RNA sequence: GGGAACGACUCGAGUAGAGUCGAAAAGAUAUGGAGGGAGACGCAGGUGUCCCUCAUUCGGAAACGAAUGAGAACCACCUGAACUACGUUUAACUCCUAAGUCAAAACAGCAGCUUCGGCUGCUGAAGUUUAGACACUUCUUCGGAAGUGUCUAAACAAAAGAAACAACAACAACAAC
Reactivity to DMS in 0.01 (KOAc 150mM, MgCl2 10mM, bicine 150mM(pH8.5), 24C), signal-to-noise 2, nucleotides 027 to 126: g010a070u020a300u010g000g000a000g040g010g000a080g000a000c020g000c030a000g010g030u000g000u020c150c160c020u010c000a000u040u000c000g000g000a120a110a260c000g050a020a010u000g020a020g000a100a170c270c000a000c010c000u000g010a080a030c140u000a290c040g010u000u000u020a180a260c010u000c000c000u000a100a060g010u010c020a060a030a150a180c000a010g010c000a010g010c000u000u010c220g040g000c000u000g000c000u000g000a000a070
Reactivity to 2A3 in 0.01 (KOAc 150mM, MgCl2 10mM, bicine 150mM(pH8.5), 24C), signal-to-noise 1, nucleotides 027 to 126: g040a000u070a060u170g020g010a030g030g000g010a040g020a020c000g060c020a000g000g010u020g040u170c050c030c040u000c000a000u000u000c000g020g020a030a050a060c020g000a040a010u030g010a000g000a010a010c020c000a010c010c010u020g030a040a060c070u140a030c030g000u010u040u020a020a030c020u050c010c000u020a140a030g050u020c050a020a000a130a150c000a000g030c000a000g000c000u030u200c300g220g030c000u020g000c000u000g000a020a000
Conditions: 150 mM KOAc, 10 mM MgCl2 and 150 mM bicine (pH 8.5), 24 C.
Structure probing data (DMS and 2A3) for a 177-nucleotide construct.
For DMS, 976 sequencing reads were counted.